[RMDB]
RNA sequence: GGGAACGACUCGAGUAGAGUCGAAAAGAUAUGGAAACGCUAAGAGCAACAGCUCGGAUCGGAAACGAUCCGAGGACAUGCUCGAUGCGUUUCCUAAGUCAAACGUCCUGUGUUCGCACAGGACGAAGCCAUAUAUGUUCUUCGGAACAUAUAUGGCAAAAGAAACAACAACAACAAC
Reactivity to 2A3 in 0.01 (KOAc 150mM, MgCl2 10mM, bicine 150mM(pH8.5), 24C), signal-to-noise 3, nucleotides 027 to 126: g000a000u050a010u130g000g010a010a000a000c000g010c010u080a120a030g000a000g010c010a020a190c040a240g110c000u010c000g010g010a000u000c010g030g010a050a090a030c020g000a000u000c000c000g000a010g000g010a020c010a040u110g010c000u000c000g010a000u000g000c010g000u000u010u000c000c010u000a000a010g000u000c020a050a020a050c020g000u000c000c000u000g010u010g020u030u070c300g010c130a000c010a000g000g000a000c000g000a010a010
Reactivity to DMS in 0.01 (KOAc 150mM, MgCl2 10mM, bicine 150mM(pH8.5), 24C), signal-to-noise 5, nucleotides 027 to 126: g010a060u020a300u010g000g010a020a000a030c010g010c000u020a210a300g000a000g010c010a030a110c200a300g010c020u000c000g010g010a010u010c000g010g000a090a090a170c000g010a000u000c000c000g010a000g000g010a090c250a080u010g000c000u000c000g000a120u010g010c000g000u000u010u010c000c000u000a000a080g010u010c060a050a160a210c020g020u000c000c000u000g020u000g000u000u010c180g010c010a010c000a000g020g000a000c000g000a020a050

Source: RMDB library TTRDEL, as collected in RNAgym. Structure probing data (2A3 and DMS) for a 177-nucleotide construct. Reactivities are given for positions 27 through 126. Conditions: 150 mM KOAc, 10 mM MgCl2 and 150 mM bicine (pH 8.5), 24 C.